[RMDB]
An RNA of 177 nucleotides, treated with 2A3 and DMS and read out base by base. As a SHAPE reagent, 2A3 marks flexible, mostly unpaired nucleotides at the ribose 2'-OH. The DMS profile rests on 883 reads.

RNA sequence: GGGAACGACUCGAGUAGAGUCGAAAAGGAGGAGUCCCCAGAUAGCUCAGGUCGGGGCGUCGGGGCAUUGAGCUCCCACAGCGUCAGGCAGGUCACCGAGGCUGCGCGGACUUGGGGAGCUAGCUUGCCUUCUAUUGUGCUUCGGCACAAUAGAAGGAAAAGAAACAACAACAACAAC
Reactivity to 2A3 in 0.01 (KOAc 150mM, MgCl2 10mM, bicine 150mM(pH8.5), 24C), signal-to-noise 1, nucleotides 027 to 126: g080g040a100g010g080a040g060u210c000c000c000c000a030g000a020u110a110g000c010u030c060a020g050g270u160c120g030g110g010g000c000g010u030c000g010g040g000g010c020a000u010u210g030a000g000c030u030c010c000c000a110c000a010g030c060g020u000c010a010g060g040c010a010g000g060u060c000a050c190c200g010a060g130g010c010u000g030c110g000c090g000g020a030c020u020u040g000g030g000g000a020g030c000u010a010g000c000u060u090g040
Reactivity to DMS in 0.01 (KOAc 150mM, MgCl2 10mM, bicine 150mM(pH8.5), 24C), signal-to-noise 1, nucleotides 027 to 126: g010g000a080g000g010a110g000u000c000c030c000c040a140g010a050u020a100g020c000u000c060a140g020g010u020c210g030g000g000g010c020g020u000c070g010g020g030g000c150a050u000u030g010a040g020c000u000c000c020c000a110c070a060g010c110g010u000c040a040g010g020c000a110g000g000u010c080a100c190c120g010a150g000g020c000u000g000c060g050c050g020g000a060c020u000u000g010g030g000g030a000g020c010u000a040g000c000u000u000g020